This 177-nucleotide RNA was probed chemically with DMS and 2A3. Values cover nucleotides 27 to 126. Conditions: 150 mM KOAc, 10 mM MgCl2 and 150 mM bicine (pH 8.5), 24 C.

RNA sequence: GGGAACGACUCGAGUAGAGUCGAAAACGCUUUCGAUGAUGUAGGGGCAACCCCGACACCGCACAACCCCGAUGGGUCAGCGGUCUUGAGCGGGCAUUUGCCUUCGAUGAGAGACCGUGUUAGCGUUAAACGUUAGAUCUUUCGAGAUCUAACGUUUAAAAGAAACAACAACAACAAC
Reactivity to DMS in 0.01 (KOAc 150mM, MgCl2 10mM, bicine 150mM(pH8.5), 24C), signal-to-noise 6, nucleotides 027 to 126: c060g010c030u010u000u010c050g000a110u020g010a100u010g000u010a110g000g000g000g000c140a090a110c300c020c000c020g020a050c090a090c060c040g020c070a090c180a210a080c020c020c010c290g020a110u040g010g000g000u010c110a140g000c010g000g000u000c020u000u010g010a100g010c020g000g000g000c100a300u020u020u030g010c020c010u000u000c030g010a170u050g000a230g010a040g010a030c040c020g000u000g010u000u000a040g010c050g030u010u010
Reactivity to 2A3 in 0.01 (KOAc 150mM, MgCl2 10mM, bicine 150mM(pH8.5), 24C), signal-to-noise 5, nucleotides 027 to 126: c020g010c020u030u080u070c070g140a120u090g020a040u110g080u120a050g020g010g010g030c040a030a120c030c000c000c010g030a020c010a030c010c020g070c010a040c030a070a080c000c000c010c020g160a140u280g040g000g030u010c040a000g020c000g000g000u020c010u040u050g000a020g020c020g000g000g010c010a110u050u080u300g010c000c000u110u080c020g120a170u110g020a040g020a010g000a010c000c020g020u020g000u070u050a010g010c010g010u000u020